[RMDB]
RNA sequence: GGGAACGACUCGAGUAGAGUCGAAAACUUUGCUUUAGUAGAAAUCUGGUCAAGAAUCCUAGUGUUGCAUUCCUCACUUGGUCUCCUAAGCUGACAGUGAAUGAAGAUAAAAGUAAGCUUGUUCCCUUCAUCCCAGAUUCUUUCACUGCCUACCUCAUCACUGGACUAAUUUCGAUUAGUCCAGUGAAAAAGAAACAACAACAACAAC
Reactivity to 2A3 in 0.01 (KOAc 150mM, MgCl2 10mM, bicine 150mM(pH8.5), 24C), signal-to-noise 3, nucleotides 027 to 156: c030u070u020u110g020c000u050u060u100a080g040u080a060g100a070a110a080u070c020u060g040g010u070c100a090a040g040a090a080u070c000c010u030a040g010u030g050u100u070g030c070a080u070u080c010c010u030c020a030c010u000u070g040g020u060c050u010c050c010u030a070a060g020c040u040g070a060c000a010g020u020g060a050a080u060g010a040a050g020a050u150a210a120a020a000g050u060a010a070g030c030u030u070g010u040u010c010c000c000u010u040c070a060u030c000c010c000a040g020a100u030u020c010u020u050u030c010a020c010u000g020c000c020u040a090c000c060u090c020a060
Reactivity to DMS in 0.01 (KOAc 150mM, MgCl2 10mM, bicine 150mM(pH8.5), 24C), signal-to-noise 2, nucleotides 027 to 156: c010u010u000u000g000c030u000u000u000a100g010u000a100g030a050a090a100u020c040u020g010g000u020c050a110a110g010a100a090u000c020c030u000a060g030u000g000u010u000g000c020a140u000u000c020c020u000c090a040c060u020u010g030g010u000c040u000c030c030u000a070a170g030c010u010g000a030c030a070g020u000g010a060a030u010g020a060a070g010a130u010a030a050a070a140g020u000a040a110g010c080u000u000g010u000u000c030c010c020u010u010c120a120u000c020c000c010a100g000a180u000u000c040u000u000u000c030a010c030u000g000c030c010u010a090c070c010u000c080a230
An RNA of 207 nucleotides, treated with 2A3 and DMS and read out base by base.
2A3 adducts were read by reverse transcription with SuperScript II with manganese.
The reactions ran in a buffer of 150 mM KOAc, 10 mM MgCl2 and 150 mM bicine (pH 8.5), at 24 C.
For DMS, 4,296 sequencing reads were counted.
Source: RMDB library OK3TST, as collected in RNAgym.